[RMDB]
RNA sequence: GGGAACGACUCGAGUAGAGUCGAAAAUGUGCGGCGAUGAAGGAUUUAUUCGAAGAUGUGCGCGCGGUGGCGGAACCCUCUGGCGCGCUGGCGCUGGCGGGAAUGAAAAAAUAUAUCGCCCUGCACAAAAUAAUAAUCGAUUCGUCGAUUAUUAUUUAAAAGAAACAACAACAACAAC
Reactivity to DMS in 0.01 (KOAc 150mM, MgCl2 10mM, bicine 150mM(pH8.5), 24C), signal-to-noise 9, nucleotides 027 to 126: u010g010u000g020c030g010g010c010g010a030u000g010a160a130g010g000a160u000u000u000a080u010u000c040g010a120a110g010a110u010g010u000g010c050g020c070g020c050g010g010u000g010g010c030g010g000a120a130c060c010c010u000c010u000g000g020c000g010c010g010c280u010g010g020c010g020c010u000g000g010c110g010g000g000a040a040u000g000a000a010a090a060a060a070u010a140u000a190u000c020g010c010c010c180u000g030c020a020c030a040
Reactivity to 2A3 in 0.01 (KOAc 150mM, MgCl2 10mM, bicine 150mM(pH8.5), 24C), signal-to-noise 3, nucleotides 027 to 126: u100g000u010g010c010g010g010c020g030a010u040g070a060a040g100g060a020u060u110u070a100u070u130c020g040a050a050g070a120u080g040u060g080c040g000c020g000c050g120g040u040g060g000c030g000g000a050a060c020c000c000u000c010u020g020g000c000g000c010g000c100u100g100g010c000g000c010u010g020g000c020g010g020g000a020a040u110g060a040a040a030a000a050a000u140a010u010a010u010c000g010c010c030c040u090g000c010a010c010a020